[RMDB]
RNA sequence: GGGAACGACUCGAGUAGAGUCGAAAAUACCACUGGAGGGAAGCAAUUCAGCACAGUAAGCCGCCCGUGCAGAGGCGAAGCGGAAGACCCAGCUGUUUAAGGAGGACGGAAUAGUGACUGGUAUGUCAAACUGAGUCGUAUUCGUACGACUCAGUUUAAAAGAAACAACAACAACAAC
Reactivity to DMS in 0.01 (KOAc 150mM, MgCl2 10mM, bicine 150mM(pH8.5), 24C), signal-to-noise 5, nucleotides 027 to 126: u040a120c040c010a110c110u000g020g010a120g020g000g000a050a090g020c100a120a090u000u020c030a050g000c050a100c100a060g010u010a110a140g000c030c040g010c020c020c040g040u020g000c090a100g010a140g000g010c050g010a070a140g000c040g010g020a070a090g000a100c090c040c040a090g000c030u010g020u010u010u010a080a080g000g010a090g010g000a060c100g010g000a050a020u030a090g010u010g000a040c020u000g000g000u010a050u040g000u040c080
Reactivity to 2A3 in 0.01 (KOAc 150mM, MgCl2 10mM, bicine 150mM(pH8.5), 24C), signal-to-noise 3, nucleotides 027 to 126: u110a000c000c000a020c070u040g020g040a050g060g000g030a020a020g050c000a020a040u130u150c010a020g000c000a010c010a030g080u040a020a000g040c000c000g040c000c010c020g060u090g030c080a080g040a050g150g000c020g010a030a000g000c010g050g000a020a010g020a030c000c020c020a030g030c010u010g050u040u060u110a050a040g040g020a030g010g000a010c040g030g050a030a070u060a090g030u030g070a020c000u050g000g020u100a060u070g060u080c000